An RNA of 177 nucleotides, treated with DMS and 2A3 and read out base by base. It was measured as part of the RMDB library OK2TST. Values are in units of 0.01, from 0 to 300, in steps of 10. The DMS profile rests on 13,054 reads. For 2A3, 10,603 sequencing reads were counted. The reactions ran in a buffer of 150 mM KOAc, 10 mM MgCl2 and 150 mM bicine (pH 8.5), at 24 C.

[RMDB]
RNA sequence: GGGAACGACUCGAGUAGAGUCGAAAAGUUGCCAUACAAACCUCCGAUAGGUAUAUCUUAUUGUUCCCAUGAUACGGUAUGGCGGAGGAUUUGUCAAACAAUUCUCACGGGGCGAGGGACUCUCCGGCUUCUAUUAACCAUUCGUGGUUAAUAGAAGAAAAGAAACAACAACAACAAC
Reactivity to DMS in 0.01 (KOAc 150mM, MgCl2 10mM, bicine 150mM(pH8.5), 24C), signal-to-noise 8, nucleotides 027 to 126: g020u000u000g010c040c060a170u010a060c020a040a040a070c020c010u000c130c030g010a100u010a080g010g010u010a080u000a030u010c010u000u000a050u010u000g000u000u010c030c030c030a140u010g000a050u000a040c070g010g010u000a020u000g010g010c010g010g010a020g000g000a140u000u000u000g010u000c180a150a120a140c090a020a060u000u000c010u000c030a120c100g010g000g000g010c080g010a060g010g000g010a100c080u000c030u000c020c040g010g010
Reactivity to 2A3 in 0.01 (KOAc 150mM, MgCl2 10mM, bicine 150mM(pH8.5), 24C), signal-to-noise 6, nucleotides 027 to 126: g020u020u030g040c020c020a050u070a150c020a010a080a020c010c000u030c020c020g050a040u060a100g120g110u150a050u010a020u130c030u070u060a070u070u110g030u060u050c000c000c020a020u070g010a020u020a030c050g000g010u050a010u020g080g020c010g000g010a010g000g010a050u020u010u050g050u050c040a030a060a080c000a050a090u070u000c020u000c020a060c030g010g000g000g010c020g020a060g050g050g050a050c010u010c010u000c040c020g060g000